The data come from the RNA Mapping Database (RMDB), library OK1LIB. The record gives the reactivity of an RNA of 177 nucleotides to 2A3 and DMS. For 2A3 the reverse transcriptase was SuperScript II with manganese. DMS adducts were read by reverse transcription with MarathonRT.
[RMDB]
RNA sequence: GGGAACGACUCGAGUAGAGUCGAAAACUUGGGCUUCUGGUUGUUGAUGGCGUCUCAUUUCACCAGGGGCCGCUGACGGAAUCAAUGAUACCUCAAGACGCACAUCCGGGCCCCGAAGGUCAUUAUCCGGCAUUUAAUUAUUCGUAAUUAAAUGCCGAAAAGAAACAACAACAACAAC
Reactivity to 2A3 in 0.01 (KOAc 150mM, MgCl2 10mM, bicine 150mM(pH8.5), 24C), signal-to-noise 9, nucleotides 027 to 126: c020u050u060g040g000g000c000u010u000c000u040g070g020u070u070g040u070u080g060a060u030g030g030c030g070u010c020u000c050a090u050u150u120c030a020c030c010a010g000g010g010g000c000c010g000c010u050g030a040c040g030g040a050a060u110c070a080a110u170g040a060u140a190c030c030u060c050a050a020g040a040c040g010c040a050c010a100u020c030c030g040g010g000c010c000c010c010g070a100a040g040g010u030c020a040u020u140a050u130c050
Reactivity to DMS in 0.01 (KOAc 150mM, MgCl2 10mM, bicine 150mM(pH8.5), 24C), signal-to-noise 3, nucleotides 027 to 126: c060u000u000g010g000g000c010u020u000c030u000g000g020u000u030g030u010u020g010a110u000g000g000c120g000u010c040u000c070a060u000u010u000c080a090c050c050a140g000g000g010g010c010c000g040c070u010g010a160c080g010g020a140a090u020c070a090a070u040g000a090u020a070c020c020u010c060a070a080g000a070c060g020c050a040c080a050u000c090c030g000g010g000c030c000c000c050g000a060a070g010g000u000c070a080u010u030a140u040c140